Background
The record gives the reactivity of an RNA of 207 nucleotides to 2A3 and DMS. Reactivities are rounded to 0.1 and cut off at 0 and 3. The 2A3 profile rests on 4,926 reads. The reactions ran in a buffer of 150 mM KOAc, 10 mM MgCl2 and 150 mM bicine (pH 8.5), at 24 C. For 2A3 the reverse transcriptase was SuperScript II with manganese.

RNA sequence: GGGAACGACUCGAGUAGAGUCGAAAAGUAGCUUCGGCUACCCCCACGGGGUCUCGGCUCGAGAGGCUUAGACAUGCUCUGAAGCCUCCACGGAGCAACAGCUAAGCUACCCACCUCGAGCGAGACGGAGGCACCCAGGUGCAUGCUUCGGCAUGAAGUAUCUCUACCAUUUCGAUGGUAGAGAUACAAAAGAAACAACAACAACAAC
Reactivity to 2A3 in 0.01 (KOAc 150mM, MgCl2 10mM, bicine 150mM(pH8.5), 24C), signal-to-noise 4, nucleotides 027 to 156: g010u000a000g000c010u040u050c300g090g000c000u010a000c020c000c000c020c000a050c070g120g000g010g010u000c000u000c000g250g090c010u000c000g000a000g010a000g010g020c000u000u000a010g010a040c110a200u270g000c000u000c010u030g060a120a020g000c000c000u030c000c010a040c020g000g000a020g020c030a060a080c040a070g110c010u010a010a000g000c000u070a130c010c110c040a050c000c010u010c000g000a010g000c010g000a010g010a000c010g000g010a010g000g000c000a050c020c020c010a100g120g070u120g070c000a000u000g000c000u090u100c250g080g000c000a010u020g030a050a010
Reactivity to DMS in 0.01 (KOAc 150mM, MgCl2 10mM, bicine 150mM(pH8.5), 24C), signal-to-noise 2, nucleotides 027 to 156: g020u000a020g000c030u000u010c230g010g010c020u000a020c010c010c020c000c050a110c140g050g040g000g000u010c020u000c010g050g020c020u010c020g000a020g020a150g020g010c020u000u000a000g010a070c020a300u000g000c010u000c030u000g000a060a160g020c030c010u000c020c000a300c020g000g000a040g000c010a080a150c070a130g010c020u010a050a020g050c010u000a060c040c000c080a300c060c000u020c020g010a020g020c020g010a080g020a050c040g010g040a060g020g030c000a090c010c040c020a280g000g020u010g010c000a120u000g010c040u000u010c170g000g060c070a090u000g020a230a270